[RMDB]
RNA sequence: GGGAACGACUCGAGUAGAGUCGAAAAGAAGAAGCAUUCACAUUUAUGUGGUCAUUUAUCUAGUCAGAUCAUGGGAAGGUACAUAAAAGUGGUGGCUUUUGAGAUGGCUAUGAUAUUCUUAGGGAGAGACCUGGAGCACUUUCGAGUGCUCCAGGUCAAAAGAAACAACAACAACAAC
Reactivity to 2A3 in 0.01 (KOAc 150mM, MgCl2 10mM, bicine 150mM(pH8.5), 24C), signal-to-noise 2, nucleotides 027 to 126: g110a030a000g070a080a000g000c130a100u140u110c050a010c030a110u030u130u090a160u020g000u000g070g170u060c070a040u060u070u060a050u010c000u000a020g040u020c030a000g020a120u010c000a100u090g070g000g000a160a000g120g030u080a050c030a140u210a170a050a000a070g020u070g180g000u040g000g120c070u000u030u140u000g070a080g000a070u040g000g000c010u090a120u300g000a000u070a040u140u000c020u010u130a080g000g120g000a180g000a000